[RMDB]
The record gives the reactivity of an RNA of 207 nucleotides to 2A3.

RNA sequence: GGGAACGACUCGAGUAGAGUCGAAAAUGGCAGCCUAAGGGCAGCCCGUCUUGCCUGAGAGUACCACGGCUUGGGUAAAGGCGUCGACUAGUGGUGAACGUCGGCAGGCGAUGACUGUGACCUGUCGGUGUAUUGCAGUCUACCAAAGCGAGGGGCGGUUGAUAGUGAGCUUCGGCUCACUAUCAACAAAAGAAACAACAACAACAAC
Reactivity to 2A3 in 0.01 (KOAc 150mM, MgCl2 10mM, bicine 150mM(pH8.5), 24C), signal-to-noise 1, nucleotides 027 to 156: u060g000g020c040a020g030c050c030u060a130a200g040g000g000c000a010g040c000c000c000g000u000c000u010u030g000c010c000u020g010a000g000a010g040u020a040c000c010a000c030g020g000c000u000u000g000g020g000u080a160a070a010g020g000c010g010u120c030g080a110c070u130a090g030u010g010g000u040g030a070a000c000g010u000c000g000g000c000a000g000g000c040g020a030u080g050a010c040u000g000u040g050a140c000c000u000g000u030c010g030g000u010g030u030a050u000u170g000c000a000g010u000c040u040a070c040c080a150a100a000g050c060g020a070g050g010g030g000c050g010

2A3 adducts were read by reverse transcription with SuperScript II with manganese. Reactivities are given for positions 27 through 156.